The record gives the reactivity of an RNA of 207 nucleotides to 2A3 and DMS. It was measured as part of the RMDB library M2RFPK.
[RMDB]
RNA sequence: GGGAACGACUCGAGUAGAGUCGAAAACCCGAUGAAUUGCCGAGAAGCCUGGCUCGAAAUCGUCGACGCAUCGACGACGGUCCUGCCAUGAGACCGUAACGAGGACAUGUCGCCUCGAAUGGCGUCGUAUAACAUGAGUGGUUCGCCACUCAUGUAACCCCAGAUUGAUAUUCGUAUCAAUCUGGGGAAAAGAAACAACAACAACAAC
Reactivity to 2A3 in 0.01 (KOAc 150mM, MgCl2 10mM, bicine 150mM(pH8.5), 24C), signal-to-noise 4, nucleotides 027 to 156: c000c010c000g010a070u120g040a030a240u230u120g030c050c030g040a040g090a210a070g060c110c210u160g060g000c050u040c060g040a080a070a010u020c000g000u000c000g010a030c080g000c110a060u050c010g010a000c000g000a000c000g000g000u000c010c020u050g000c000c010a030u010g030a020g000a070c030c020g040u090a010a000c010g010a000g010g000a050c070a140u270g030u190c090g030c030c000u000c010g010a010a010u020g030g050c000g020u050c060g000u050a130u080a260a010c000a000u000g000a000g000u000g010g020u030u050c080g030c080c000a000c000u000c000a000u000g000u000a000a000
Reactivity to DMS in 0.01 (KOAc 150mM, MgCl2 10mM, bicine 150mM(pH8.5), 24C), signal-to-noise 2, nucleotides 027 to 156: c000c000c020g000a070u000g020a070a090u000u010g000c050c010g030a150g000a150a100g020c030c030u000g030g030c020u000c040g030a060a090a010u000c050g040u000c000g000a060c150g010c120a100u010c000g000a090c000g010a000c000g010g000u000c000c000u000g120c060c180a130u000g010a110g000a050c000c020g020u000a070a120c040g020a070g000g040a100c050a160u010g020u010c080g020c000c000u000c010g000a100a070u000g000g000c000g020u000c010g020u000a150u000a090a080c020a000u000g000a000g050u000g000g000u000u000c300g000c040c000a000c000u000c010a000u020g020u000a040a100